[RMDB]
RNA sequence: GGGAACGACUCGAGUAGAGUCGAAAACUUACCGUUCGCGGUAAGACUCUUCGGUGACGAAGAGACCGAGCAGCUACGGCUGCUCGGAGGUAGACGUGAGUCUACCACACACUCGUGAGAGUGUGACAUCAACUACGGUUGAUGAGUAGUGCUACGGCACUACAGCGGCGCGUACGCGCGCCGCAUGCUUAAGCCUCAAUAAAGCUUGCCUUGAGUGCCUCAAGCAGAUAUAGACUGAAACAUUUAGUAUGGGCAAGCAGGGAGCUAGACUGAUCUUCGGAUCAGUCAAAAGAAACAACAACAACAAC
Reactivity to DMS in 0.01 (KOAc 150mM, MgCl2 10mM, bicine 150mM(pH8.5), 24C), signal-to-noise 2, nucleotides 027 to 266: c010u000u020a010c010c000g000u000u010c220g000c010g010g030u000a000a020g010a240c030u000c000u000u000c000g020g000u030g000a170c010g000a010a010g000a000g030a220c000c000g000a000g020c000a000g060c010u000a120c270g040g020c000u000g020c000u010c010g010g000a070g010g000u000a000g000a000c000g010u010g000a180g000u000c000u020a010c000c010a300c010a000c000a000c000u010c010g000u040g010a170g000a040g020u000g020u020g000a300c040a010u000c000a000a000c030u010a070c200g080g000u000u010g030a000u010g010a270g000u000a000g000u020g000c010u000a090c240g020g000c000a010c020u000a000c000a130g020c020g030g010c010g140c030g060u030a040c240g000c030g100c000g060c010c010g070c020a040u000g000c110u000u010a100a150g000c030c010u000c030a090a080u010a140a150a110g000c000u000u000g000c020c020u000u000g000a040g010u000g020c070c000u000c150a080a060g000c030a050g000a080u010a120u010a050g000a080c080u010g000a090a100a120c090a060u000u000u000a060g000u000a050u020g000g000g040c000a010a000g020c000a080g000g020g000a120g000c070u010a110
Reactivity to 2A3 in 0.01 (KOAc 150mM, MgCl2 10mM, bicine 150mM(pH8.5), 24C), signal-to-noise 4, nucleotides 027 to 266: c010u000u010a000c000c000g020u020u060c280g010c030g080g000u010a010a010g060a080c000u000c000u020u010c000g050g040u110g060a050c020g000a000a000g000a000g000a010c000c000g000a010g000c000a010g000c010u040a220c300g140g010c010u010g010c000u010c000g000g010a000g000g010u000a000g000a010c030g040u070g070a050g010u020c000u010a000c000c000a010c000a000c000a000c010u000c000g030u070g100a120g000a010g020u000g000u000g070a000c000a000u000c000a010a000c000u050a040c220g140g000u000u000g000a000u010g030a050g030u010a000g000u000g000c010u020a050c250g130g000c010a000c000u010a020c000a010g010c000g000g000c000g000c010g020u050a060c300g000c010g000c000g020c080c010g030c000a000u030g020c000u040u030a030a030g000c000c000u030c040a070a130u090a160a140a020g000c010u010u040g000c020c000u000u030g030a020g070u130g060c030c020u080c060a050a030g000c020a000g070a030u240a030u100a140g110a060c120u150g120a090a210a030c090a060u160u180u150a130g080u150a170u210g030g000g010c000a000a000g000c010a000g020g070g010a100g050c040u190a130

Chemical mapping of a 307-nucleotide RNA with DMS and 2A3. The reactions ran in a buffer of 150 mM KOAc, 10 mM MgCl2 and 150 mM bicine (pH 8.5), at 24 C. For DMS, 4,660 sequencing reads were counted. For 2A3 the reverse transcriptase was SuperScript II with manganese.